RNA sequence: GGGAACGACUCGAGUAGAGUCGAAAAGAGAUGUUUCGACAUCUCAAAAAGAUAUGGAGACACCCAGGUGUAUAUCGUAACAUCUGGUCGGAAACGACCAGUGGAUAUACUUCAGCCUGGUGUCUCCUAAGUCAAAAAACCCGAGUUCGCUCGGGAACAUGUGAGAAUGCUUCGGCAUUCUCACAUGAAAAGAAACAACAACAACAAC
Reactivity to 2A3 in 0.01 (KOAc 150mM, MgCl2 10mM, bicine 150mM(pH8.5), 24C), signal-to-noise 2, nucleotides 027 to 156: g010a000g000a010u050g010u100u200u150c200g100a010c000a000u000c000u000c030a000a090a000a040a000g020a010u030a010u040g000g000a010g000a000c020a010c000c170c080a040g020g000u060g010u040a030u000a010u010c020g010u040a030a050c020a100u090c030u000g010g000u000c000g000g020a010a010a010c000g000a000c020c000a000g000u000g000g000a000u000a000u010a000c010u160u300c170a030g030c010c020u010g000g000u000g000u000c000u000c000c000u000a000a000g000u000c000a020a010a040a090a050a080c020c000c000g010a010g000u080u110c230g000c050u000c020g020g010g000a000a000